[RMDB]
RNA sequence: GGGAACGACUCGAGUAGAGUCGAAAAGAAUUGGUAUGUAAGCUACUUCUUCCAGUAGCUGCGUCAUAACAUCAAGGUUAUGCAUACUGAGCCGAAGCUCAGCUUCGGUCCUACAAGGAAGACCAAAUACAGCUCAGCCCGUUCGCGGGCUGAGCAAUCGAUUAGAAUUGUUCGCAAUUCUAAUCGAAAAAGAAACAACAACAACAAC
Reactivity to 2A3 in 0.01 (KOAc 150mM, MgCl2 10mM, bicine 150mM(pH8.5), 24C), signal-to-noise 3, nucleotides 027 to 156: g060a010a070u010u020g000g010u000a000u000g000u000a000a020g010c000u000a000c000u080u120c000u010u010c000c000a010g000u000a000g000c000u000g000c000g000u010c000a000u000a010a000c010a090u290c150a110a030g300g000u000u000a000u000g000c000a000u000a000c010u000g020a000g000c000c000g000a000a000g010c040u090c300a040g010c010u020u000c000g010g000u010c010c010u070a080c060a070a060g000g000a000a000g000a000c000c100a030a050a010u220a130c100a030g000c010u000c000a000g000c000c000c000g040u090u100c170g030c040g050g000g050c000u010g000a000g000c000a000a000
Reactivity to DMS in 0.01 (KOAc 150mM, MgCl2 10mM, bicine 150mM(pH8.5), 24C), signal-to-noise 2, nucleotides 027 to 156: g000a050a070u000u010g030g000u020a000u000g000u020a300a300g000c000u000a020c020u000u010c020u000u000c030c050a170g030u000a010g000c020u010g020c020g010u000c010a010u010a020a010c010a300u030c300a190a120g040g000u010u000a000u000g030c000a030u000a020c020u000g010a080g030c000c000g000a040a060g020c010u020c170a140g020c000u000u010c010g020g030u000c020c070u010a050c170a120a140g070g020a040a010g000a300c180c050a070a100a140u000a080c070a200g000c020u000c030a000g000c030c020c000g080u030u020c300g030c010g080g040g030c000u000g000a010g030c010a020a030